[RMDB]
RNA sequence: GGGAACGACUCGAGUAGAGUCGAAAAGAAAUGUCUGUGAGAAGGUCGGAGUUUCCCAACGCUUGGGGUAUGACGGAUUUCUGUCAUACUACAGUGGGGCGAAAUUGCGCACUUACUCGCGGGCGAAGUUCCGACGCGGGUUCGCCCGCGUCGGAACAAAAGAAACAACAACAACAAC
Reactivity to 2A3 in 0.01 (KOAc 150mM, MgCl2 10mM, bicine 150mM(pH8.5), 24C), signal-to-noise 1, nucleotides 027 to 126: g080a040a030a040u120g000u000c000u000g000u020g000a010g000a020a020g040g070u030c000g080g000a020g000u000u000u000c010c000c030a050a120c010g000c010u100u180g300g000g000g000u000a000u000g030a000c000g020g030a050u180u250u280c030u010g000u000c030a000u000a000c000u000a100c010a000g010u000g000g010g000g000c120g040a000a000a020u050u030g060c010g000c060a010c000u000u120a260c000u000c020g030c040g000g000g000c000g000a050a050